This 207-nucleotide RNA was probed chemically with 2A3 and DMS. Conditions: 150 mM KOAc, 10 mM MgCl2 and 150 mM bicine (pH 8.5), 24 C. The 2A3 profile rests on 851 reads.
RNA sequence: GGGAACGACUCGAGUAGAGUCGAAAAGCCGUGGCGAACGAGGCCAAGACGUUCAAGUUCCGUUUCCACGAUAUCGCAAAGGGUGUCCUUCUUGACGGACGUUCCCUUUUUCUUUCUUUUGUUUGGAUUGUCGCGUAUCAAGUGGGCGGCAGAGAGCAAGCUGGAAUUUUUUCGAAAAUUCCAGCUUAAAAGAAACAACAACAACAAC
Reactivity to 2A3 in 0.01 (KOAc 150mM, MgCl2 10mM, bicine 150mM(pH8.5), 24C), signal-to-noise 2, nucleotides 027 to 156: g030c020c010g010u030g020g050c090g010a050a030c040g000a080g100g000c010c070a070a000g040a050c100g040u040u080c070a090a040g030u130u110c010c000g030u150u180u020c010c010a040c030g010a010u000a040u110c020g010c070a050a030a000g010g020g000u040g030u040c000c030u060u200c100u100u260g120a070c100g000g010a020c000g010u140u170c000c000c000u000u020u000u030u010c020u000u040u000c000u030u070u130u140g140u090u060u100g070g010a040u000u070g090u140c020g000c010g030u060a040u070c070a110a170g000u050g030g030g020c000g020g000c030a010g030a000g010a010g060c050
Reactivity to DMS in 0.01 (KOAc 150mM, MgCl2 10mM, bicine 150mM(pH8.5), 24C), signal-to-noise 2, nucleotides 027 to 156: g070c060c020g030u010g010g030c070g000a070a120c120g000a120g010g000c030c090a070a090g020a080c060g030u000u010c060a080a120g010u000u000c020c020g000u010u000u000c010c020a110c060g030a080u000a030u000c050g020c040a080a100a100g020g030g010u000g000u010c000c010u000u010c110u000u010g030a090c130g000g000a060c020g030u010u000c000c010c000u030u000u010u010u000c030u020u010u010c040u010u000u000u000g020u010u000u020g020g000a110u000u000g020u000c040g040c020g030u020a160u020c050a130a130g030u000g030g030g030c000g030g030c080a060g000a240g010a110g030c110